[RMDB]
Chemical mapping of a 177-nucleotide RNA with DMS and 2A3. For 2A3, 27,919 sequencing reads were counted. Conditions: 150 mM KOAc, 10 mM MgCl2 and 150 mM bicine (pH 8.5), 24 C. The DMS profile rests on 9,050 reads.
RNA sequence: GGGAACGACUCGAGUAGAGUCGAAAAGAUAUGGACGAUGAUGAACUACUCUCAGGUCGGAAACGACGUAGGAGCAUCCGCUCGUCCUAAGUCAAAACGUAUGAUAGGGUUCGCCCUAUCAUACGAAGUUCUCUGUAAAGUUCGCUUUACAGAGAACAAAAGAAACAACAACAACAAC
Reactivity to DMS in 0.01 (KOAc 150mM, MgCl2 10mM, bicine 150mM(pH8.5), 24C), signal-to-noise 7, nucleotides 027 to 126: g000a040u000a300u000g000g010a010c010g020a020u000g000a100u000g010a060a030c060u020a300c010u000c010u000c040a120g000g010u000c010g000g010a100a080a240c010g010a000c000g010u000a300g000g010a020g010c010a030u000c020c020g000c010u000c010g000u000c000c010u000a030a100g010u000c040a060a080a080a210c010g000u000a000u010g000a010u000a010g010g000g010u000u010c300g010c000c000c000u000a000u000c000a000u000a000c000g010a030a080
Reactivity to 2A3 in 0.01 (KOAc 150mM, MgCl2 10mM, bicine 150mM(pH8.5), 24C), signal-to-noise 5, nucleotides 027 to 126: g030a030u070a040u150g000g000a010c010g000a010u300g010a010u010g010a060a090c070u210a070c000u300c010u030c040a030g130g000u000c010g000g020a080a070a030c010g000a000c020g030u050a020g000g000a010g020c000a000u000c010c020g020c010u000c010g000u000c000c000u020a120a030g060u020c030a010a020a080a120c010g000u000a000u010g010a000u010a000g050g010g040u070u100c280g210c010c000c000u000a000u000c000a000u000a000c000g000a010a000